[RMDB]
RNA sequence: GGGAACGACUCGAGUAGAGUCGAAAAUCGUCGACGAAGGCUGGUGAGGAGAGAAGACGCCUGGGCGCCCUCGCCUGGAUCCGCUGGCCUAGUUUCCUCUGGAUUCUAGCGCUACGAUCUUCGGGUUGAGGCCCCUACGCACUCCUUCCCACGCUGCGCUUCACAUUAGGUUCGCCUAAUGUGAAGCAAAAGAAACAACAACAACAAC
Reactivity to 2A3 in 0.01 (KOAc 150mM, MgCl2 10mM, bicine 150mM(pH8.5), 24C), signal-to-noise 2, nucleotides 027 to 156: u120c040g060u010c100g030a140c060g050a160a030g050g000c000u000g000g000u030g020a010g030g000a010g010a050g000a070a040g050a110c060g020c020c050u040g000g000g000c120g040c030c020c000u000c000g000c000c000u010g020g010a000u010c000c010g020c010u020g000g010c000c000u000a000g010u020u010u080c020c040u300c300u300g010g000a000u000u000c000u010a000g010c010g000c240u010a000c100g000a000u010c000u100u120c100g010g000g000u070u300g020a020g000g010c000c000c020c000u000a010c010g000c010a000c020u000c000c070u020u060c020c010c000a010c090g010c020u050g010c040

Conditions: 150 mM KOAc, 10 mM MgCl2 and 150 mM bicine (pH 8.5), 24 C. Chemical mapping of a 207-nucleotide RNA with 2A3. For 2A3 the reverse transcriptase was SuperScript II with manganese. It was measured as part of the RMDB library VIROID. The 2A3 profile rests on 1,795 reads.